[RMDB]
RNA sequence: GGGAACGACUCGAGUAGAGUCGAAAAAAAGCAUACUCUCAUAUCGGCUUAAGCCGGUGGCAUGGGUACGUUUAAACAUGUGUAGAGUGCAAAGGUUCCUUAAAAAAGGUUUCAAACUUGCAUUUAACCCGUCCAUCUGAUUCGUCAGAUGGACGGGAAAAGAAACAACAACAACAAC
Reactivity to 2A3 in 0.01 (KOAc 150mM, MgCl2 10mM, bicine 150mM(pH8.5), 24C), signal-to-noise 1, nucleotides 027 to 126: a000a000a000g010c000a000u000a020c000u000c060u040c000a000u000a000u040c000g030g020c140u300u250a080a000g000c000c020g030g030u000g050g000c240a130u110g000g050g000u010a000c080g000u000u000u190a240a300a140c130a180u180g060u000g010u140a000g000a000g080u000g000c000a030a030a030g010g020u100u070c000c000u060u060a000a000a200a100a100a000g220g000u060u000u050c300a130a260a180c000u060u000g000c000a010u070u000u000a020a030